Record summary:
This 207-nucleotide RNA was probed chemically with 2A3. The RNA was probed in 150 mM KOAc, 10 mM MgCl2 and 150 mM bicine (pH 8.5) at 24 C.
RNA sequence: GGGAACGACUCGAGUAGAGUCGAAAAUUCCAUUUGAGUAUCCUGAAAACGGGCUUUUCAGCAUGGAACGUACAUAUUAAAUAGUAGGAGUACAUAGUGGCCCGUAUAGCAGGCAUUAACAUUCCUGAAAACGUGAAAAGGUUCGCCUUUUCACGAAGCAUACAACUUCCUUCGGGAAGUUGUAUGCAAAAGAAACAACAACAACAAC
Reactivity to 2A3 in 0.01 (KOAc 150mM, MgCl2 10mM, bicine 150mM(pH8.5), 24C), signal-to-noise 1, nucleotides 027 to 156: u060u000c000c000a050u190u110u110g100a070g010u090a030u160c000c000u040g050a000a000a090a030c010g000g000g000c040u180u140u110u180c040a030g050c020a090u100g030g010a240a010c060g110u050a030c010a030u200a110u120u260a060a090a100u280a050g000u000a000g030g130a030g060u000a000c000a000u060a080g040u010g020g000c000c000c000g000u040a000u000a000g020c000a010g000g030c010a000u080u050a000a080c000a090u000u090c020c010u010g080a030a040a040a040c030g000u000g030a000a000a000a000g020g010u040u060c040g110c010c000u000u000u010u000c000a000c020g000a000a000
Notes: The data come from the RNA Mapping Database (RMDB), library M2RFPK. For 2A3 the reverse transcriptase was SuperScript II with manganese.